[RMDB]
RNA sequence: GGGAACGACUCGAGUAGAGUCGAAAAUAGGAAGUGAAAAGGGGGCAGUUGCCUCUGUUUUGCCACAGCCAUAUGCAGAGAGUGAGUAGAAGGCCUUCCUAACAUGGAAAGGCCAUGUGAGAAUGUCAAAUGUAUAGGUUGCCCACUCAAAUUGCAAAUCCCAAAAUACUUUCGAGUAUUUUGGGAUAAAAGAAACAACAACAACAAC
Reactivity to DMS in 0.01 (KOAc 150mM, MgCl2 10mM, bicine 150mM(pH8.5), 24C), signal-to-noise 3, nucleotides 027 to 156: u010a140g010g000a150a090g020u000g010a050a040a080a090g000g010g030g000g050c010a240g020u000u000g030c020c020u000c030u010g010u000u010u000u000g010c030c010a100c010a140g000c030c030a120u010a090u000g020c040a050g000a170g010a070g050u000g020a040g010u000a090g010a160a100g020g030c020c010u010u000c000c020u020a110a150c140a090u000g010g010a090a050a090g020g020c020c010a000u000g000u000g020a150g000a090a060u010g020u000c040a040a080a110u000g010u010a140u000a110g020g010u000u000g020c010c020c010a050c040u000c020a040a080a170u010u000g010c000a060a110
Reactivity to 2A3 in 0.01 (KOAc 150mM, MgCl2 10mM, bicine 150mM(pH8.5), 24C), signal-to-noise 2, nucleotides 027 to 156: u130a000g010g040a030a010g040u020g040a050a070a020a000g010g000g020g020g000c020a020g070u260u260g080c000c000u000c000u020g040u000u050u010u020g020c010c040a060c020a030g010c010c000a120u100a000u070g020c030a000g020a010g000a010g100u050g010a020g010u030a030g080a170a050g010g000c020c010u000u000c020c000u050a080a070c070a110u190g000g010a070a070a030g020g000c000c000a000u010g000u010g000a080g040a100a040u110g050u070c010a060a080a070u100g010u050a120u010a070g040g000u020u000g000c000c020c000a020c000u040c020a120a160a090u130u110g060c010a030a000